Description:
Structure probing data (2A3) for a 207-nucleotide construct. The data come from the RNA Mapping Database (RMDB), library OK3TST. The 2A3 profile rests on 446 reads.

RNA sequence: GGGAACGACUCGAGUAGAGUCGAAAAACUACAUUCAAAGAAUCGGCAGUUGGAAAGGUUGACACGUCGAAUAAGAAAGCGGUAACCACUUCCAGUAUUCACGCUAACCAGAUCACAGCGGAGCGGAUCGAGAUUCGCAACGAUGGAAGCGGAAGUGCGUCCUGAACGAAUUCGUUCGUUCAGGACGAAAAGAAACAACAACAACAAC
Reactivity to 2A3 in 0.01 (KOAc 150mM, MgCl2 10mM, bicine 150mM(pH8.5), 24C), signal-to-noise 2, nucleotides 027 to 156: a010c040u140a090c020a130u040u210c050a030a160a020g050a020a110u190c070g110g010c000a070g030u080u220g030g090a130a090a070g100g090u130u170g080a000c000a020c200g060u020c010g020a110a100u240a210a100g230a140a010a000g080c020g000g000u050a030a040c030c000a050c030u030u030c000c020a020g000u070a130u030u070c060a010c120g040c020u090a080a110c020c000a040g030a110u280c140a070c050a080g030c000g020g000a020g050c000g090g060a000u110c140g000a080g000a210u000u070c030g040c020a050a050c140g050a050u030g000g070a010a020g050c030g000g000a040a020g030u060g020